[RMDB]
Chemical mapping of a 207-nucleotide RNA with 2A3. It was measured as part of the RMDB library M2RFPK. Reactivities are given for positions 27 through 156.

RNA sequence: GGGAACGACUCGAGUAGAGUCGAAAAAGCGAUGAUACGUCAUCGCAACGAUUGCCUGAUCGUAAAACAGGAGACGGCCGUGGCCGCGACCACGUAAAAAAGCGUAACGUGGUCUACGGAUCACGAAAAAAGCGCGGAACGUUCGCGUUCCGCGCAAGCUAUCUUUUUCGUUCGCGAAAAAGAUAGCAAAAGAAACAACAACAACAAC
Reactivity to 2A3 in 0.01 (KOAc 150mM, MgCl2 10mM, bicine 150mM(pH8.5), 24C), signal-to-noise 3, nucleotides 027 to 156: a020g000c010g000a000u010g010a000u030a110c180g080u040c010a010u000c000g000c010a020a010c010g000a010u010u040g010c000c000u010g030a030u010c020g140u220a010a000a000a050c010a010g040g000a040g060a040c150g100g060c060c000g010u000g010g000c030c010g000c000g010a010c010c000a000c020g020u040a020a000a000a080a050a010g070c050g050u060a060a010c010g000u000g000g030u000c010u030a030c090g020g010a100u020c000a000c030g050a140a010a000a010a000a020g000c000g000c000g000g000a010a000c010g010u070u120c240g040c000g100u000u000c000c010g000c000g000c010a000a000